[RMDB]
RNA sequence: GGGAACGACUCGAGUAGAGUCGAAAACCACCGAAGUUCGCUUCGGUGGAAAAGAUACCCGUCUCGGUAUCAAAGUGAGACCCACAGACCACAGGAAACUGAAAACCGAUCCGUUCGCGGAUCGGAACUUGAGAGAUACGUUCGCGUAUCUCUCAAGAAAAGAAACAACAACAACAAC
Reactivity to DMS in 0.01 (KOAc 150mM, MgCl2 10mM, bicine 150mM(pH8.5), 24C), signal-to-noise 2, nucleotides 027 to 126: c000c000a000c020c000g000a000a020g070u000u000c260g000c010u000u000c010g030g010u010g000g020a010a010a040a130g000a030u020a000c000c000c160g000u000c100u010c190g000g030u000a030u000c020a050a100a110g000u010g020a100g000a170c030c030c010a110c190a060g010a110c060c100a100c060a040g010g040a060a090a180c090u000g000a050a060a120a220c000c010g000a000u000c000c000g010u000u000c190g050c010g000g010a000u000c000g000g000a030a020
Reactivity to 2A3 in 0.01 (KOAc 150mM, MgCl2 10mM, bicine 150mM(pH8.5), 24C), signal-to-noise 2, nucleotides 027 to 126: c020c000a010c010c000g010a000a000g010u050u100c130g110c140u000u000c000g000g000u000g000g000a000a010a000a010g040a010u040a020c000c000c080g190u020c100u070c060g030g020u030a020u030c010a060a050a040g100u060g040a130g050a070c030c010c000a030c040a010g090a030c020c020a020c020a100g080g080a090a110a050c050u070g030a060a070a040a120c000c000g010a000u000c020c010g000u070u030c290g020c010g060g000a000u000c000g000g010a000a010
An RNA of 177 nucleotides, treated with DMS and 2A3 and read out base by base. For 2A3 the reverse transcriptase was SuperScript II with manganese. Values cover nucleotides 27 to 126.